[RMDB]
Overview:
An RNA of 207 nucleotides, treated with 2A3 and read out base by base.
RNA sequence: GGGAACGACUCGAGUAGAGUCGAAAAAUUUGGCUUUGAGGUUCACUUAUACUCUUUUCGACAUCGAAGCUUGCUUAAAAAUGUUUUCAAGUUAAUUUUUAGGGACUUUUGUACUUGAGAGCAAUUUGGUGGUUUGCUAGUAUUUCCAAACCAUAUUGGUAGUACAAUGGUUCGCCAUUGUACUACCAAAAGAAACAACAACAACAAC
Reactivity to 2A3 in 0.01 (KOAc 150mM, MgCl2 10mM, bicine 150mM(pH8.5), 24C), signal-to-noise 1, nucleotides 027 to 156: a000u150u040u000g020g000c020u040u000u020g000a020g010g050u060u050c030a000c020u070u110a020u220a300c030u100c030u050u020u040u260c060g000a020c000a130u030c050g020a020a030g000c000u020u130g020c000u110u160a000a070a170a100a070u110g030u050u000u070u050c050a020a020g000u000u080a080a250u070u160u160u070u300a030g120g000g040a000c100u240u050u070u160g090u030a000c000u000u050g000a000g020a000g020c030a060a110u100u000u020g110g000u020g000g030u000u030u000g000c000u000a030g030u140a160u050u110u070c020c000a000a060a060c000c000a000u020a030u150u050
The reactions ran in a buffer of 150 mM KOAc, 10 mM MgCl2 and 150 mM bicine (pH 8.5), at 24 C.